[RMDB]
RNA sequence: GGGAACGACUCGAGUAGAGUCGAAAAGGGCAACAUUCCGAGGGGACCGUCCCCUCGGUAAUGGCGAAUGGGACCCAGAGAUCUCUCUAGAUUCCGAUAGAGAAUCGAGAGAAAACUGGCUCUCCCUAUGCCAGCGUCUUCGGACGCUGGAAAAGAAACAACAACAACAAC
Reactivity to 2A3 in 0.01 (KOAc 150mM, MgCl2 10mM, bicine 150mM(pH8.5), 24C), signal-to-noise 3, nucleotides 027 to 129: g020g030g000c010a080a060c000a100u030u000c000c000g000a040g000g010g000g010a030c080c030g300u300c040c000c000c010u000c000g000g000u000a000a010u010g020g000c020g090a020a110u110g000g000g000a000c000c000c060a000g010a000g000a020u000c000u000c000u000c000u020a020g000a000u010u000c030c020g160a280u120a150g130a000g000a030a000u000c020g000a000g000a000g020a000a010a010a000c000u010g030g000c000u000c000u010c020c010c010u040a090u100g020
Reactivity to DMS in 0.01 (KOAc 150mM, MgCl2 10mM, bicine 150mM(pH8.5), 24C), signal-to-noise 5, nucleotides 027 to 129: g050g000g010c020a100a110c110a000u010u020c000c000g020a020g000g020g010g030a300c170c300g060u050c000c000c010c000u020c000g030g000u070a000a000u030g050g000c090g040a130a120u030g040g000g040a040c220c000c020a040g030a000g030a200u000c040u000c100u000c000u060a130g030a050u030u010c000c030g090a190u100a150g030a210g020a110a000u000c010g020a020g040a040g010a000a020a090a140c000u000g000g030c030u000c020u000c030c000c020u020a050u130g020